An RNA of 177 nucleotides, treated with 2A3 and DMS and read out base by base. It was measured as part of the RMDB libraries RFM100 and RFMREP. 2A3 adducts were read by reverse transcription with SuperScript II with manganese. 2A3 is a SHAPE reagent: it acylates the 2'-hydroxyl of flexible nucleotides of all four kinds. Reactivities are rounded to 0.1 and cut off at 0 and 3. Conditions: 150 mM KOAc, 10 mM MgCl2 and 150 mM bicine (pH 8.5), 24 C. Reactivities are given for positions 27 through 126.

[RMDB]
RNA sequence: GGGAACGACUCGAGUAGAGUCGAAAAUGUCCCUGAGCAGACCGGCGGGACGAUUCUUUCAUGGCGGGGCCUGUGCAUACCCCGUUUCAUCACCGGUUUGCAAACCUGAUUAGAGCGCACACUAUAACCAUGAGUAAAGAUUCGUCUUUACUCAUGGAAAAGAAACAACAACAACAAC
Reactivity to 2A3 in 0.01 (KOAc 150mM, MgCl2 10mM, bicine 150mM(pH8.5), 24C), signal-to-noise 9, nucleotides 027 to 126: u180g050u030c000c000c000u010g030a030g000c000a000g000a010c010c000g010g010c060g050g070g070a060c070g050a070u200u080c080u100u200u090c060a040u070g010g000c000g000g000g010g010c010c050u170g020u030g010c010a020u060a120c000c000c000c000g010u030u050u080c020a070u050c000a000c000c000g000g000u000u000u000g000c000a010a000a010c030c030u150g080a220u080u180a080g030a040g110c080g010c020a010c000a010c030u060a040u080a210a050
Reactivity to DMS in 0.01 (KOAc 150mM, MgCl2 10mM, bicine 150mM(pH8.5), 24C), signal-to-noise 7, nucleotides 027 to 126: u030g010u010c000c010c000u020g010a290g000c020a010g010a020c000c010g020g030c090g010g020g000a110c190g020a080u010u010c120u020u010u010c060a130u000g010g000c020g000g010g000g010c050c050u020g010u000g020c040a200u050a150c010c000c000c000g020u000u000u030c030a040u010c050a110c010c000g000g000u000u010u000g010c020a030a110a210c110c070u020g010a120u010u010a060g010a070g010c120g010c010a030c020a200c090u000a060u020a100a190